[RMDB]
This 177-nucleotide RNA was probed chemically with DMS.
The RNA was probed in 150 mM KOAc, 10 mM MgCl2 and 150 mM bicine (pH 8.5) at 24 C.
The data come from the RNA Mapping Database (RMDB), library M2PK50.
DMS adducts were read by reverse transcription with MarathonRT.
For DMS, 772 sequencing reads were counted.
RNA sequence: GGGAACGACUCGAGUAGAGUCGAAAAAUAAGUCCUUUCGAGGACUUAUAAUGCUGCCCUAAGAGGACCUGGGGGUGUCUGGGCUGCUAAACUCAUCAGCCGUGGCUUUGGGGUUCGCCCCAAAGAACAGGAGGUCAUUUUUCGAAAUGACCUCCUGAAAAGAAACAACAACAACAAC
Reactivity to DMS in 0.01 (KOAc 150mM, MgCl2 10mM, bicine 150mM(pH8.5), 24C), signal-to-noise 1, nucleotides 027 to 126: a030u030a020a030g000u000c010c020u020u000u010c160g030a040g020g000a020c000u020u020a000u000a070a060u020g000c130u010g020c000c000c050u000a180a120g020a180g000g000a020c050c040u010g020g020g010g020g000u010g010u000c060u000g000g000g010c010u000g020c090u010a080a090a090c070u000c020a080u010c060a080g000c030c040g000u000g000g010c000u000u010u000g010g020g010g000u000u000c240g010c010c000c000c000a030a000a030g000a060a200